[RMDB]
RNA sequence: GGGAACGACUCGAGUAGAGUCGAAAAAUCAGGUAAUGCUAUCAGUGGGGGUAUGUUCCCAUUACAAGCAACUAUACAAUCAGACCAACAAUCUUAUGCGGACAUGGGACAAAACUACCAGCUAGAGCUACAGCCCUCUAUUCGUAGAGGGCUGUAGAAAAGAAACAACAACAACAAC
Reactivity to DMS in 0.01 (KOAc 150mM, MgCl2 10mM, bicine 150mM(pH8.5), 24C), signal-to-noise 1, nucleotides 027 to 126: a110u030c070a050g040g030u000a030a040u010g000c050u000a090u000c070a080g030u010g000g030g040g000g010u010a140u000g000u010u010c000c000c000a110u020u000a080c050a130a130g040c040a020a060c160u000a110u000a140c170a120a030u030c220a050g000a120c020c030a130a110c210a020a200u000c050u000u000a050u000g090c040g090g000a150c220a020u010g000g000g000a110c060a000a000a000a010c030u000a020c020c000a120g000c050u000a120g000a070g040